[RMDB]
RNA sequence: GGGAACGACUCGAGUAGAGUCGAAAAACACGUGCUCCAAAAGAGCACAGAGUCGCGCAUAUAACUGGCUCGACUGAUGCGCGACAAAUCGAGCCAUGUAAAGAACAAAGGAAAACAACAAACGAAACGUCAUCGUCGUCUUCGGACGAUGAUGACGAAAAGAAACAACAACAACAAC
Reactivity to 2A3 in 0.01 (KOAc 150mM, MgCl2 10mM, bicine 150mM(pH8.5), 24C), signal-to-noise 3, nucleotides 027 to 126: a000c070a000c100g000u010g000c000u000c000c000a100a060a010a040g020a010g030c000a020c000a000g020a010g000u000c000g020c000g000c110a030u110a030u060a090a120c070u030g060g000c000u000c000g070a100c120u070g020a000u020g000c040g000c010g010a000c080a000a060a000u070c000g000a000g000c000c020a050u210g100u110a030a120a070g060a150a000c080a050a020a080g170g030a120a120a020a000c150a020a000c030a060a180a040c060g130a100a070a000
Reactivity to DMS in 0.01 (KOAc 150mM, MgCl2 10mM, bicine 150mM(pH8.5), 24C), signal-to-noise 2, nucleotides 027 to 126: a080c170a140c300g060u010g000c000u040c080c030a010a200a060a300g000a010g000c000a000c000a030g000a150g020u000c030g000c000g010c020a000u000a150u000a030a090c180u100g000g000c040u020c000g030a080c270u110g000a030u000g000c000g010c080g040a030c020a000a010a070u110c210g000a010g020c060c060a270u090g000u100a050a030a070g060a180a070c190a080a070a170g000g000a000a110a020a050c200a050a040c120a040a120a040c190g000a050a050a110
Conditions: 150 mM KOAc, 10 mM MgCl2 and 150 mM bicine (pH 8.5), 24 C. Structure probing data (2A3 and DMS) for a 177-nucleotide construct. The DMS profile rests on 1,760 reads. The 2A3 profile rests on 2,662 reads. The data come from the RNA Mapping Database (RMDB), library OK1LIB.